[RMDB]
RNA sequence: GGGAACGACUCGAGUAGAGUCGAAAAUUAAAUGAUGUAGUACGGCCGCCACUGAAGGACGGGUCCUCUCCGAAAGGAGAGUUGAGUAGACUGUGAGCAGGACCGGGUGCUAGUCACUGGUGAAAAAUCUUGACACUAAGUUCGCUUAGUGUCAAGAAAAAGAAACAACAACAACAAC
Reactivity to DMS in 0.01 (KOAc 150mM, MgCl2 10mM, bicine 150mM(pH8.5), 24C), signal-to-noise 4, nucleotides 027 to 126: u000u000a050a090a090u010g000a050u000g000u000a030g010u000a070c040g000g020c020c020g010c030c010a040c020u000g020a090a110g000g010a060c040g010g000g000u010c090c010u000c000u010c000c000g000a100a090a190g010g000a010g010a010g020u010u010g010a170g020u000a090g000a090c070u000g020u000g010a100g020c010a060g000g010a120c050c020g000g000g010u010g010c020u000a040g010u000c030a040c080u000g010g000u020g000a010a050a060a090a090
Reactivity to 2A3 in 0.01 (KOAc 150mM, MgCl2 10mM, bicine 150mM(pH8.5), 24C), signal-to-noise 1, nucleotides 027 to 126: u140u090a020a100a090u080g020a020u050g010u130a030g000u010a010c020g000g000c000c000g040c010c020a030c020u080g080a110a040g060g070a020c050g000g060g050u000c000c010u000c010u010c000c010g100a080a030a000g010g010a000g000a010g020u020u030g000a010g000u050a020g050a020c050u000g000u010g090a050g000c010a080g010g030a030c000c040g050g010g040u030g030c040u040a030g000u060c000a010c050u030g080g030u110g080a110a030a000a000a040

Chemical mapping of a 177-nucleotide RNA with DMS and 2A3. The RNA was probed in 150 mM KOAc, 10 mM MgCl2 and 150 mM bicine (pH 8.5) at 24 C. DMS adducts were read by reverse transcription with MarathonRT. For DMS, 3,691 sequencing reads were counted.